[RMDB]
RNA sequence: GGGAACGACUCGAGUAGAGUCGAAAAGCCAGAGAUUUAGCUAAGCGAUUUAAUGUUGCUAAUCACAGGGCUGAAACACUAAUCAGAACUGAUGGAACUAUGGUGAUUAAUAAUGCUACCGCUAGGCAACCGGGUAAAGGUUCGCCUUUACCCGGUUAAAAGAAACAACAACAACAAC
Reactivity to DMS in 0.01 (KOAc 150mM, MgCl2 10mM, bicine 150mM(pH8.5), 24C), signal-to-noise 3, nucleotides 027 to 126: g010c010c020a100g020a150g010a130u010u010u020a050g020c030u000a090a100g020c020g040a090u000u000u010a080a080u020g020u010u000g020c030u000a040a060u010c010a100c060a080g000g010g020c020u000g000a050a060a070c240a110c210u010a060a060u000c030a040g010a050a080c050u000g000a130u000g000g030a080a070c100u010a080u000g000g020u000g020a030u010u000a050a050u010a050a050u000g000c050u000a080c170c070g000c060u000a100g010g010c100
Reactivity to 2A3 in 0.01 (KOAc 150mM, MgCl2 10mM, bicine 150mM(pH8.5), 24C), signal-to-noise 2, nucleotides 027 to 126: g050c000c000a010g020a010g000a040u090u140u140a000g010c030u090a090a060g040c050g050a040u010u070u190a230a050u160g030u130u050g000c020u060a010a000u060c020a010c010a050g000g020g110c030u060g010a010a120a000c100a020c120u150a160a100u010c010a000g020a020a000c000u040g060a130u080g140g070a100a060c080u080a170u190g000g000u000g020a040u090u030a040a110u050a140a030u020g030c010u030a050c000c100g000c070u030a010g000g020c060
The record gives the reactivity of an RNA of 177 nucleotides to DMS and 2A3.
It was measured as part of the RMDB library OK2TRN.
The RNA was probed in 150 mM KOAc, 10 mM MgCl2 and 150 mM bicine (pH 8.5) at 24 C.
2A3 adducts were read by reverse transcription with SuperScript II with manganese.
DMS adducts were read by reverse transcription with MarathonRT.